Source: RMDB library 15KREP, as collected in RNAgym. An RNA of 177 nucleotides, treated with 2A3 and DMS and read out base by base. The RNA was probed in 150 mM KOAc, 10 mM MgCl2 and 150 mM bicine (pH 8.5) at 24 C. 2A3 adducts were read by reverse transcription with SuperScript II with manganese. For DMS the reverse transcriptase was MarathonRT. For DMS, 8,285 sequencing reads were counted. Reactivities are given for positions 27 through 126.
RNA sequence: GGGAACGACUCGAGUAGAGUCGAAAAAAGAUCUUCACCAAGAGUGGCGUUAAUGACAUUUGUAUGUUUGAGAAUAAAACCACUUUGCCUACUAAUAUAGCUUUUGAACUCUAUGCUAAGCGUGCUGCAGUACUAAUAGCUUCGGCUAUUAGUACUGAAAAGAAACAACAACAACAAC
Reactivity to 2A3 in 0.01 (KOAc 150mM, MgCl2 10mM, bicine 150mM(pH8.5), 24C), signal-to-noise 6, nucleotides 027 to 126: a000a000g050a040u030c020u040u040c040a060c060c020a030a010g040a010g040u010g020g000c040g030u040u080a060a030u090g030a020c020a030u120u170u240g200u150a070u040g050u010u040u090g080a080g050a070a050u110a090a040a010a010c000c000a010c000u010u010u040g010c000c010u050a050c030u050a100a130u160a050u060a100g010c000u020u060u020u050g040a040a030c000u020c030u040a020u050g000c010u040a030a010g020c020g030u030g020c010u050g000
Reactivity to DMS in 0.01 (KOAc 150mM, MgCl2 10mM, bicine 150mM(pH8.5), 24C), signal-to-noise 6, nucleotides 027 to 126: a050a050g010a080u000c050u000u010c070a130c110c050a110a100g000a030g030u000g000g010c110g020u000u000a050a100u000g000a030c040a030u000u000u010g000u010a040u000g010u000u000u000g010a150g000a130a090u000a040a050a130a080c010c020a030c010u000u000u010g020c050c040u000a080c130u000a070a070u000a080u010a070g010c060u000u000u000u000g010a070a060c040u010c030u000a030u010g010c070u010a050a060g000c050g000u000g000c080u000g010